[RMDB]
RNA sequence: GGGAACGACUCGAGUAGAGUCGAAAAGAUAUGGAGUAUCCCUUCGAGGAUCGUGCGGUCGGAAACGACCGUCACGGGAGAAGUCAUACUCCUAAGUCAAAAGCAGAGCGGGUUCGCCCGCUCUGCAGUUAACGUCUUUCUUCGGAAAGACGUUAACAAAAGAAACAACAACAACAAC
Reactivity to DMS in 0.01 (KOAc 150mM, MgCl2 10mM, bicine 150mM(pH8.5), 24C), signal-to-noise 1, nucleotides 027 to 126: g010a020u000a100u000g000g000a020g030u000a000u000c040c060c000u000u020c030g020a190g010g010a060u000c030g020u010g000c000g000g020u010c010g020g010a010a040a060c000g000a000c000c000g020u000c010a010c000g000g020g000a040g000a020a010g010u010c110a010u010a000c000u000c000c010u000a010a100g000u000c000a100a120a140a190g020c010a020g000a030g010c000g020g020g000u000u020c260g000c010c000c000g020c010u000c000u000g010c020a010